[RMDB]
RNA sequence: GGGAACGACUCGAGUAGAGUCGAAAACGAGAUGCACGAGGGUUGGCCUCAAUCACAUAAAGAAUGUCAUCCUUCAAGGCAUAUUGAACAUUCAUCAAUCCUUUAACGCCGAUACCAUGUGCCAACGAGUUCGUCAGCUAUUCGUAGCUGACGAACUAAAAGAAACAACAACAACAAC
Reactivity to 2A3 in 0.01 (KOAc 150mM, MgCl2 10mM, bicine 150mM(pH8.5), 24C), signal-to-noise 2, nucleotides 027 to 126: c050g000a040g000a080u090g000c040a030c110g000a060g030g000g020u020u010g010g000c000c000u060c080a030a070u170c010a070c020a050u300a060a110a010g050a020a080u120g010u080c030a020u010c000c020u070u160c090a080a030g200g000c040a020u010a090u090u080g000a000a050c040a090u040u160c000a010u060c020a090a070u130c040c000u040u210u190a120a030c050g000c010c050g000a000u050a300c070c000a040u050g000u030g040c020c020a100a040c060g040
Reactivity to DMS in 0.01 (KOAc 150mM, MgCl2 10mM, bicine 150mM(pH8.5), 24C), signal-to-noise 1, nucleotides 027 to 126: c150g000a170g000a090u000g050c040a030c140g000a110g000g000g000u000u020g010g010c060c150u020c180a100a020u030c170a060c260a180u040a080a180a050g000a000a010u000g000u000c010a010u000c060c000u000u030c200a100a130g030g020c300a050u010a030u000u000g000a070a010c140a100u010u000c070a030u000c120a030a060u000c030c010u000u000u010a020a080c090g000c070c050g010a040u000a040c070c010a100u020g010u000g030c000c200a030a110c100g000
An RNA of 177 nucleotides, treated with 2A3 and DMS and read out base by base. The DMS profile rests on 568 reads. Conditions: 150 mM KOAc, 10 mM MgCl2 and 150 mM bicine (pH 8.5), 24 C. DMS adducts were read by reverse transcription with MarathonRT. 2A3 adducts were read by reverse transcription with SuperScript II with manganese. It was measured as part of the RMDB library OK2TST.